[RMDB]
RNA sequence: GGGAACGACUCGAGUAGAGUCGAAAAACCUGAUACAGCUUCGCCAAGCUCGCGUGGUUCAGGCCGAUUCCACUGCGGAUAGCACCUCUCUCAGUGUGGCUGACACGAGUACGCCGCUCGUUUGGCAGCGGGACGGGUAGUUCGCUACCCGUCCCGCAAAAGAAACAACAACAACAAC
Reactivity to 2A3 in 0.01 (KOAc 150mM, MgCl2 10mM, bicine 150mM(pH8.5), 24C), signal-to-noise 1, nucleotides 027 to 126: a010c010c000u000g000a010u090a120c040a000g000c030u020u070c000g010c010c010a110a000g010c000u020c020g010c060g100u010g000g050u040u040c070a070g000g060c040c030g050a000u190u000c030c000a020c050u100g010c010g070g000a110u160a060g000c030a010c020c040u020c000u000c010u080c080a100g000u020g000u000g100g010c000u050g000a000c010a000c150g000a000g000u000a060c060g000c000c000g000c000u020c040g020u020u070u050g090g010c010a000
The data come from the RNA Mapping Database (RMDB), library OK1LIB. This 177-nucleotide RNA was probed chemically with 2A3. The 2A3 profile rests on 672 reads.